Structure probing data (2A3 and DMS) for a 207-nucleotide construct. For 2A3, 1,421 sequencing reads were counted.
[RMDB]
RNA sequence: GGGAACGACUCGAGUAGAGUCGAAAACGAGGGGCCCGACCACCAAGCUUUGGAGAGCACUCCGGGCCGAAGGGUUGAGUAGCAUCCAGAGCGAGGAACCCACACGGAGUAGAACAGAGAAAUCACCUCCAGAGGACCCCUUAAGCGAACAAAGGAGCACUAGAACAAUGUUCGCAUUGUUCUAGUGAAAAGAAACAACAACAACAAC
Reactivity to 2A3 in 0.01 (KOAc 150mM, MgCl2 10mM, bicine 150mM(pH8.5), 24C), signal-to-noise 2, nucleotides 027 to 156: c020g010a000g030g030g020g010c040c020c050g050a060c030c020a060c010c000a030a010g000c010u020u000u020g000g010a060g000a020g010c000a010c010u050c030c060g070g080g000c020c020g030a090a020g220g010g000u060u100g010a020g020u070a060g010c000a010u000c000c000a020g010a000g000c010g000a040g010g020a030a020c000c000c000a040c010a020c120g000g020a010g000u210a070g070a220a080c150a080g100a040g040a100a150a040u030c010a050c020c000u000c010c010a020g020a060g080g020a100c000c000c000c000u000u060a020a000g020c030g070a050a080c030a170a130a120g110g010a100g020
Reactivity to DMS in 0.01 (KOAc 150mM, MgCl2 10mM, bicine 150mM(pH8.5), 24C), signal-to-noise 1, nucleotides 027 to 156: c090g030a110g010g030g060g040c000c010c000g010a140c050c050a300c010c010a110a300g000c040u010u000u000g020g000a130g040a260g020c130a080c030u000c000c160g110g010g010c010c060g050a060a130g000g040g030u030u000g000a080g010u000a030g040c030a270u000c030c070a080g000a030g000c000g000a300g010g000a130a160c040c060c030a140c040a050c060g010g000a040g000u000a140g030a190a300c000a120g010a080g010a120a140a040u010c050a160c160c000u000c050c000a210g030a240g040g000a010c000c000c020c030u010u010a030a010g060c050g000a120a090c040a070a090a120g000g000a190g060